[RMDB]
RNA sequence: GGGAACGACUCGAGUAGAGUCGAAAAGGUUGUACAAAAGAGAAGGAAUUUAGGAAAAAUAAUAGUGAUCUACAUACUACAUCUUUAGAUGCUUGCCUAGAUUAUUACAUGGCAACUGGAUAUGAUAGUCAGACGAUGUAUUCGUACAUCGUCUGACAAAAGAAACAACAACAACAAC
Reactivity to DMS in 0.01 (KOAc 150mM, MgCl2 10mM, bicine 150mM(pH8.5), 24C), signal-to-noise 1, nucleotides 027 to 126: g010g000u000u070g050u000a070c050a050a090a150a200g010a080g030a190a050g000g000a050a000u000u000u000a010g000g000a040a020a160a170a090u010a050a140u000a030g020u000g000a000u000c020u020a040c140a080u000a050c070u000a050c060a030u000c020u000u000u000a080g000a020u000g000c300u010u000g000c050c070u000a120g000a100u000u000a020u000u020a130c140a080u000g000g020c000a040a000c060u000g010g020a190u000a010u000g080a040u020a070

The record gives the reactivity of an RNA of 177 nucleotides to DMS. The reactions ran in a buffer of 150 mM KOAc, 10 mM MgCl2 and 150 mM bicine (pH 8.5), at 24 C. For DMS, 513 sequencing reads were counted.